[RMDB]
RNA sequence: GGGAACGACUCGAGUAGAGUCGAAAACGCUUGACCGCUGGCGGACACCGGUAUCCCGGCGUCGCGAAGGCGCGCUGCCAGCGCUGCCGCGAACGCCGCGAGGUCGACGCCCGGCAACAGUGCAGGGAAACGUUGUAAAGUUCGCUUUACAACGUUUAAAAGAAACAACAACAACAAC
Reactivity to 2A3 in 0.01 (KOAc 150mM, MgCl2 10mM, bicine 150mM(pH8.5), 24C), signal-to-noise 8, nucleotides 027 to 126: c040g020c050u120u080g140a300c000c010g040c130u090g000g000c000g020g010a030c020a020c010c010g010g100u180a130u110c060c050c000g000g000c000g000u000c000g000c010g020a060a030g020g010c010g000c000g020c090u220g180c090c060a050g000c000g000c010u040g000c020c000g000c000g010a150a030c000g000c000c000g000c030g010a030g010g010u020c040g000a010c000g000c000c010c000g000g010c000a020a010c030a040g080u080g050c040a090g020g060g070
Reactivity to DMS in 0.01 (KOAc 150mM, MgCl2 10mM, bicine 150mM(pH8.5), 24C), signal-to-noise 9, nucleotides 027 to 126: c050g000c090u010u010g000a120c010c010g020c140u040g010g010c000g010g000a300c300a020c010c010g000g040u050a180u050c100c100c000g000g010c000g000u010c010g020c000g000a100a300g000g000c000g020c000g000c130u010g010c200c150a180g000c000g020c010u000g000c300c010g000c010g010a040a050c020g000c000c000g020c200g020a050g010g000u000c020g010a300c010g000c010c010c000g000g000c020a050a050c110a060g000u020g010c060a070g010g000g010